[RMDB]
RNA sequence: GGGAACGACUCGAGUAGAGUCGAAAACGAGGGAUUCCGGACGACGAGAGGGUGAUGGUCGGCUACGCUGAAGAGGCCACAGUCCAGACCGACGAGAACGGCCGCAAGCUCAACGCCGGCUGGUGGCCUCAAUAGAGCCUUUCGAGGCUCUAUUGAGAAAAGAAACAACAACAACAAC
Reactivity to 2A3 in 0.01 (KOAc 150mM, MgCl2 10mM, bicine 150mM(pH8.5), 24C), signal-to-noise 3, nucleotides 027 to 126: c060g030a060g030g060g010a090u150u050c050c030g020g050a040c030g030a000c020g020a010g020a030g100g030g000u080g020a110u120g010g050u020c010g010g000c030u080a060c040g000c030u050g030a100a030g070a100g100g000c020c000a040c050a030g050u040c030c000a030g070a150c020c020g030a010c010g030a050g030a150a030c050g000g000c000c000g000c040a010a030g000c010u040c070a000a140c050g020c000c000g020g000c000u000g000g040u020g020g030c010
Reactivity to DMS in 0.01 (KOAc 150mM, MgCl2 10mM, bicine 150mM(pH8.5), 24C), signal-to-noise 7, nucleotides 027 to 126: c110g010a090g000g000g000a140u000u000c060c050g020g010a070c100g010a070c080g000a100g010a090g010g000g020u010g020a090u010g010g020u000c040g010g010c050u000a090c210g020c050u000g000a100a160g000a100g000g010c010c010a060c080a120g000u010c100c060a110g000a100c080c060g010a030c040g000a110g010a090a090c150g010g010c010c020g020c130a090a130g010c020u000c080a080a120c120g000c030c010g000g010c000u000g000g020u000g000g010c060
Structure probing data (2A3 and DMS) for a 177-nucleotide construct. It was measured as part of the RMDB library OK2TRN. The DMS profile rests on 9,506 reads. For 2A3 the reverse transcriptase was SuperScript II with manganese. For 2A3, 5,288 sequencing reads were counted. The reactions ran in a buffer of 150 mM KOAc, 10 mM MgCl2 and 150 mM bicine (pH 8.5), at 24 C.